Conditions: 150 mM KOAc, 10 mM MgCl2 and 150 mM bicine (pH 8.5), 24 C. Chemical mapping of a 177-nucleotide RNA with DMS and 2A3. As a SHAPE reagent, 2A3 marks flexible, mostly unpaired nucleotides at the ribose 2'-OH. Values cover nucleotides 27 to 126. The DMS profile rests on 688 reads.
[RMDB]
RNA sequence: GGGAACGACUCGAGUAGAGUCGAAAACAGCGUCGUGGUGUCCGCGCCGAACGAUGAAUACCUGGCCGACGACAUCAUUCUGGACACCGACCCGAAGGGCAUGUACGACACCAGGUUCACGGUGCGACCCGCAUUAUCCGUUCGCGGAUAAUGCGGGAAAAGAAACAACAACAACAAC
Reactivity to DMS in 0.01 (KOAc 150mM, MgCl2 10mM, bicine 150mM(pH8.5), 24C), signal-to-noise 1, nucleotides 027 to 126: c050a200g000c140g000u000c070g010u000g010g010u000g000u000c050c050g040c080g030c060c050g030a120a070c090g030a150u000g000a120a020u040a090c090c040u030g000g000c000c000g040a160c160g000a090c030a040u000c030a050u000u030c010u000g020g030a050c040a130c050c090g010a040c070c000c070g000a000a010g010g010g020c130a030u000g000u000a080c070g010a300c300a110c000c000a010g010g000u000u000c110a060c130g000g010u000g020c010g000a190
Reactivity to 2A3 in 0.01 (KOAc 150mM, MgCl2 10mM, bicine 150mM(pH8.5), 24C), signal-to-noise 1, nucleotides 027 to 126: c030a020g120c050g080u060c010g050u000g000g120u050g040u050c050c030g020c030g000c010c020g030a060a040c080g070a070u110g070a040a060u180a070c000c000u020g000g000c070c060g050a150c000g020a020c020a000u040c010a000u010u000c030u090g040g020a010c030a060c110c070g090a080c000c000c020g030a030a060g080g080g050c140a010u040g010u060a140c000g010a010c040a000c040c000a000g000g000u040u020c000a030c000g030g000u000g000c000g000a020